Chemical mapping of a 177-nucleotide RNA with DMS and 2A3. Reactivities are given for positions 27 through 126. For DMS, 4,180 sequencing reads were counted. It was measured as part of the RMDB library OK1LIB. For DMS the reverse transcriptase was MarathonRT. 2A3 adducts were read by reverse transcription with SuperScript II with manganese. For 2A3, 3,584 sequencing reads were counted.
[RMDB]
RNA sequence: GGGAACGACUCGAGUAGAGUCGAAAAGCAGUGCCAGACUUUGCCAAAGUUAGUAAAUUUGAUAAAGUCUUUAUGAAGCUCGAUGGAAGAGUAAUUUGGACAUUAGGUUUACUUUUUGAACAAGGCGAGUAUCAUCCACUUUCGAGUGGAUGAUACUAAAAGAAACAACAACAACAAC
Reactivity to DMS in 0.01 (KOAc 150mM, MgCl2 10mM, bicine 150mM(pH8.5), 24C), signal-to-noise 3, nucleotides 027 to 126: g000c080a040g050u020g000c040c060a130g000a080c050u020u040u010g020c060c020a040a090a050g010u010u040a040g010u000a020a040a030u000u000u000g000a020u000a120a090a100g000u000c030u010u010u020a000u020g000a140a130g000c020u000c050g020a130u040g020g040a110a090g000a030g030u000a070a050u000u000u000g000g020a040c030a030u010u000a030g020g000u000u020u010a000c000u000u040u010u040u060g010a070a190c100a060a100g000g010c100g000
Reactivity to 2A3 in 0.01 (KOAc 150mM, MgCl2 10mM, bicine 150mM(pH8.5), 24C), signal-to-noise 5, nucleotides 027 to 126: g030c030a020g020u050g120c010c000a020g020a100c040u050u020u090g020c020c010a040a040a050g050u080u050a010g000u040a020a020a050u060u050u020g020a020u060a080a190a010g000u000c000u000u070u070a120u040g080a090a050g040c010u010c040g140a140u300g110g190a140a100g010a050g010u090a100a110u030u040u070g010g000a000c010a020u010u020a010g000g010u010u000u000a010c000u010u060u040u050u120g060a100a040c040a080a010g050g000c030g020